An RNA of 177 nucleotides, treated with DMS and 2A3 and read out base by base. Reactivities are given for positions 27 through 126. The reactions ran in a buffer of 150 mM KOAc, 10 mM MgCl2 and 150 mM bicine (pH 8.5), at 24 C. 2A3 is a SHAPE reagent: it acylates the 2'-hydroxyl of flexible nucleotides of all four kinds. The DMS profile rests on 6,001 reads. 2A3 adducts were read by reverse transcription with SuperScript II with manganese. For 2A3, 6,356 sequencing reads were counted.
RNA sequence: GGGAACGACUCGAGUAGAGUCGAAAACACCAUACCGGCCACUGCGGUCAUCUGGGAGAGCAUGGCGAGGUGGCCCGCCCAGGUGGUCACGGCUGAGAAGAGGGAGAUCUUGGUUCGGAGGAGACCGAUCAUUACACGUGUUCGCACGUGUAAUGAUAAAAGAAACAACAACAACAAC
Reactivity to DMS in 0.01 (KOAc 150mM, MgCl2 10mM, bicine 150mM(pH8.5), 24C), signal-to-noise 4, nucleotides 027 to 126: c180a130c030c020a130u010a100c110c030g000g000c020c020a080c090u000g020c080g000g010u000c010a020u000c030u000g020g000g000a100g000a050g000c030a060u000g000g010c040g020a110g000g010u000g000g010c000c010c000g010c010c000c010a040g010g030u000g010g000u010c020a060c050g010g020c060u000g000a080g010a070a070g000a080g010g000g000a110g010a060u010c020u000u000g000g010u000u000c040g010g010a100g010g000a110g010a120c050c040g000
Reactivity to 2A3 in 0.01 (KOAc 150mM, MgCl2 10mM, bicine 150mM(pH8.5), 24C), signal-to-noise 4, nucleotides 027 to 126: c050a010c020c020a010u100a090c030c030g000g040c010c000a070c080u160g040c080g060g000u010c000a020u020c010u030g040g030g000a300g030a020g090c170a190u120g050g000c030g030a110g020g170u120g070g040c000c020c010g000c000c000c000a020g020g050u030g010g010u000c030a010c070g010g000c040u050g050a070g030a100a010g040a050g020g060g010a060g020a020u040c020u060u080g030g000u100u150c050g050g010a020g030g010a020g010a020c020c040g000